[RMDB]
RNA sequence: GGGAACGACUCGAGUAGAGUCGAAAACGCGCCUUUAUGGCAUACGGAUCUGCUGACAUGUUUUACUACCCAGCUCACCAACAAGUGGCGUAGUACCAUUCGUCAAGACACUCAUCGCUACUUGCUAGCCGAUUACUGAGUUCGCUCAGUAAUCGGCAAAAGAAACAACAACAACAAC
Reactivity to 2A3 in 0.01 (KOAc 150mM, MgCl2 10mM, bicine 150mM(pH8.5), 24C), signal-to-noise 2, nucleotides 027 to 126: c060g010c000g040c010c010u090u250u170a210u300g020g000c010a010u120a100c080g030g010a080u020c030u100g050c000u010g000a030c010a050u040g050u060u120u030u050a100c080u080a080c000c000c010a020g050c030u060c040a070c020c000a010a080c010a080a050g000u000g000g000c010g030u050a010g000u030a090c040c030a150u070u140c100g140u090c070a050a000g080a030c030a010c080u030c030a080u040c050g040c040u000a030c000u000u000g040c000u050a030
Reactivity to DMS in 0.01 (KOAc 150mM, MgCl2 10mM, bicine 150mM(pH8.5), 24C), signal-to-noise 1, nucleotides 027 to 126: c130g010c250g000c040c000u000u000u000a090u050g000g000c010a080u000a100c140g020g000a070u000c060u000g000c070u010g000a070c050a030u010g000u000u000u000u000a120c100u010a060c030c050c010a090g000c040u000c060a030c140c060a020a110c120a080a100g060u000g000g020c130g030u000a020g000u000a020c190c060a070u000u000c130g000u000c080a100a060g010a060c110a010c090u000c090a060u010c010g000c010u000a040c000u010u000g020c090u000a070
Source information:
Conditions: 150 mM KOAc, 10 mM MgCl2 and 150 mM bicine (pH 8.5), 24 C. The record gives the reactivity of an RNA of 177 nucleotides to 2A3 and DMS. 2A3 adducts were read by reverse transcription with SuperScript II with manganese. Values cover nucleotides 27 to 126.